Source: RMDB library M2PK50, as collected in RNAgym.
An RNA of 177 nucleotides, treated with 2A3 and DMS and read out base by base.
For DMS, 1,527 sequencing reads were counted.
For DMS the reverse transcriptase was MarathonRT.
The reactions ran in a buffer of 150 mM KOAc, 10 mM MgCl2 and 150 mM bicine (pH 8.5), at 24 C.
[RMDB]
RNA sequence: GGGAACGACUCGAGUAGAGUCGAAAACUCUGCUAAUUCGUUAGCAGAGGUACACUGGGACGGGUCGGGAGGGGGAUACUCGCGGUCCCAAGAAGAAACCAGCAAGCACAUUAUUCGUAAUGUGCAAUAUAGAAUACUCGUUCGCGAGUAUUCUAUAAAAAGAAACAACAACAACAAC
Reactivity to 2A3 in 0.01 (KOAc 150mM, MgCl2 10mM, bicine 150mM(pH8.5), 24C), signal-to-noise 2, nucleotides 027 to 126: c000u010c010u000g020c000u020a020a040u090u070c160g050u030u020a000g000c000a000g000a020g030g000u050a030c100a000c030u080g030g000g240a010c040g030g000g200u240c060g040g030g070a280g070g050g020g000g030a010u040a070c020u010c030g000c010g070g000u040c000c010c000a010a000g050a020a020g050a050a050a010c020c010a000g070c080a110a010g000c000a010c000a020u000u040a020u160u130c200g020u040a010a010u010g000u000g000c000a000a000
Reactivity to DMS in 0.01 (KOAc 150mM, MgCl2 10mM, bicine 150mM(pH8.5), 24C), signal-to-noise 2, nucleotides 027 to 126: c000u000c000u000g000c010u000a020a050u000u020c200g010u000u000a010g000c010a000g000a000g000g030u010a030c140a200c030u000g000g010g000a120c070g010g050g010u020c110g020g010g000a130g010g000g010g010g010a110u000a010c020u000c020g030c040g020g000u010c010c010c010a050a070g010a100a130g010a080a030a090c090c060a090g000c190a110a110g010c010a010c000a010u000u000a050u000u010c190g000u000a000a000u000g020u000g000c020a070a040